[RMDB]
RNA sequence: GGGAACGACUCGAGUAGAGUCGAAAAGUCUAGCGAAAGGAUCCCACCCGGGACACACGCAAGUCGCGAAUUACGCCGACCGGCCAAGGUCAAUUGCAGAACUCAACUGCAUGAGUAAGCUAGACGAAGGACCUAUAGUCUUCGGACUAUAGGUCCUAAAAGAAACAACAACAACAAC
Reactivity to DMS in 0.01 (KOAc 150mM, MgCl2 10mM, bicine 150mM(pH8.5), 24C), signal-to-noise 1, nucleotides 027 to 126: g000u000c000u000a000g020c000g040a140a120a070g000g000a090u000c000c000c000a230c300c000c000g000g000g000a060c150a000c080a240c000g010c030a130a040g040u000c210g000c010g000a220a210u000u000a030c150g050c090c000g060a020c000c160g000g000c010c030a070a120g010g030u000c000a070a190u000u000g000c100a020g000a060a100c060u010c170a060a040c050u000g010c000a050u000g000a130g000u000a040a110g010c000u030a030g000a070c010g000a090
Reactivity to 2A3 in 0.01 (KOAc 150mM, MgCl2 10mM, bicine 150mM(pH8.5), 24C), signal-to-noise 1, nucleotides 027 to 126: g000u000c020u010a010g000c040g040a140a010a000g130g020a030u030c060c000c010a000c000c000c000g000g010g090a030c040a010c000a010c080g070c030a030a000g040u080c060g000c010g080a090a180u300u130a120c070g030c070c030g020a000c010c040g030g080c050c010a120a050g060g000u050c030a000a060u090u030g010c040a040g040a150a090c090u110c240a060a090c030u010g000c000a020u010g010a020g100u020a010a010g000c030u010a000g000a000c000g020a010

An RNA of 177 nucleotides, treated with DMS and 2A3 and read out base by base. DMS adducts were read by reverse transcription with MarathonRT. The RNA was probed in 150 mM KOAc, 10 mM MgCl2 and 150 mM bicine (pH 8.5) at 24 C. 2A3 adducts were read by reverse transcription with SuperScript II with manganese. Values cover nucleotides 27 to 126. The 2A3 profile rests on 989 reads. Source: RMDB library OK2TRN, as collected in RNAgym.